Structure probing data (DMS and 2A3) for a 177-nucleotide construct. Conditions: 150 mM KOAc, 10 mM MgCl2 and 150 mM bicine (pH 8.5), 24 C. The DMS profile rests on 3,267 reads.
RNA sequence: GGGAACGACUCGAGUAGAGUCGAAAAGGUAAUUCAGUUACCCAUGACAAUAUAAUCAUCAUCACAAAUGAUGUUGAGAUAUUGGAACAUCUCAUAUCAAGCGUGAAAUUUAUUUUCAUAAAUGAAGGAUUACGUAGGGUUUCGACCCUACGUAAUCAAAAGAAACAACAACAACAAC
Reactivity to DMS in 0.01 (KOAc 150mM, MgCl2 10mM, bicine 150mM(pH8.5), 24C), signal-to-noise 3, nucleotides 027 to 126: g010g040u000a040a050u010u040c190a070g040u000u000a030c000c000c250a100u000g060a080c060a010a010u010a020u030a060a050u000c090a070u010c090a030u010c020a010c170a060a300a190u000g010a000u000g040u000u020g010a030g000a010u000a000u010u010g040g010a120a140c180a140u020c010u000c020a020u040a050u000c010a000a000g010c300g030u000g000a000a060a020u010u000u010a010u020u010u040u000c030a000u000a000a200a070u050g000a180a060g020
Reactivity to 2A3 in 0.01 (KOAc 150mM, MgCl2 10mM, bicine 150mM(pH8.5), 24C), signal-to-noise 8, nucleotides 027 to 126: g060g010u060a080a030u150u150c110a080g140u040u070a110c000c000c000a030u040g020a010c020a040a010u040a020u120a160a070u110c110a060u050c010a000u010c000a050c010a040a060a050u070g010a000u000g050u070u050g010a000g010a000u050a060u090u270g090g020a050a020c050a060u000c000u010c010a020u030a010u060c000a020a000g010c010g020u020g020a010a000a010u030u060u030a040u010u010u010u010c030a030u030a150a100a050u110g080a070a050g150